An RNA of 177 nucleotides, treated with DMS and 2A3 and read out base by base. It was measured as part of the RMDB library OK1LIB. For DMS, 2,814 sequencing reads were counted.
RNA sequence: GGGAACGACUCGAGUAGAGUCGAAAAUGGAUUGUGAUCCAGGACACGAUGAUGCAAUAGCAUUAAUUUUAGCGGGGGCAAUUGACAGUCCACUAGAGAUAUUAGCUGUAACAACAGUCGCAGGUAAGUAAAUUUAGCGUUUCGACGCUAAAUUUACAAAAGAAACAACAACAACAAC
Reactivity to DMS in 0.01 (KOAc 150mM, MgCl2 10mM, bicine 150mM(pH8.5), 24C), signal-to-noise 2, nucleotides 027 to 126: u000g000g000a020u000u040g000u000g010a060u050c000c040a060g000g000a060c100a040c080g000a100u020g000a040u010g050c000a180a090u020a130g000c000a100u000u020a040a050u050u000u010u030a070g000c100g000g000g000g010g010c100a030a060u000u000g000a040c140a070g010u000c020c060a030c110u000a030g000a080g020a090u050a110u050u010a090g010c030u000g000u000a070a060c150a090a090c150a040g020u000c050g000c060a090g020g000u000a090a120
Reactivity to 2A3 in 0.01 (KOAc 150mM, MgCl2 10mM, bicine 150mM(pH8.5), 24C), signal-to-noise 3, nucleotides 027 to 126: u070g010g000a040u050u040g040u110g060a040u010c000c010a030g070g010a040c020a010c120g050a060u070g010a000u060g000c060a070a300u090a260g000c020a030u020u090a120a160u060u210u080u100a050g000c040g010g030g000g000g010c040a090a020u020u060g070a010c000a010g060u020c000c000a010c030u030a030g030a020g020a030u060a100u210u120a070g010c010u000g030u110a090a000c050a030a000c010a100g060u080c000g030c080a030g040g070u120a170a070
Annotation
DMS adducts were read by reverse transcription with MarathonRT. Reactivities are given for positions 27 through 126.